[RMDB]
RNA sequence: GGGAACGACUCGAGUAGAGUCGAAAAAUUAUUCUGCUAAAACCAUUGCCUCGUUAAUCCUCAGUCCCGAGGUGGGGAUUAUUAUCCUCAUUUUGCAGAGAAGCAAACUGAGACUCAGAGAUUUCACAGCUGGGGAGGGAGCCAGCUCAUCCCUCUGCGAGGACUAUGAGUUCGCUCAUAGUCCUCGAAAAGAAACAACAACAACAAC
Reactivity to 2A3 in 0.01 (KOAc 150mM, MgCl2 10mM, bicine 150mM(pH8.5), 24C), signal-to-noise 1, nucleotides 027 to 156: a000u200u110a080u140u020c050u100g050c010u090a030a060a100a080c020c030a070u090u100g060c000c040u060c070g050u070u160a040a070u110c020c000u000c030a000g010u050c000c000c000g020a010g110g020u060g000g040g000g040a000u080u000a080u160u140a010u140c000c010u000c000a020u040u040u030u050g000c030a050g000a020g090a300a000g000c020a040a000a100c000u060g000a010g020a050c000u030c100a010g000a030g030a140u070u150u230c070a050c010a030g000c030u040g000g000g040g070a050g000g000g030a010g100c000c000a000g000c000u000c000a050u000c000c000c000u040c020u110g090

Notes:
Conditions: 150 mM KOAc, 10 mM MgCl2 and 150 mM bicine (pH 8.5), 24 C. This 207-nucleotide RNA was probed chemically with 2A3. It was measured as part of the RMDB library OK3TST. For 2A3, 430 sequencing reads were counted. For 2A3 the reverse transcriptase was SuperScript II with manganese. As a SHAPE reagent, 2A3 marks flexible, mostly unpaired nucleotides at the ribose 2'-OH.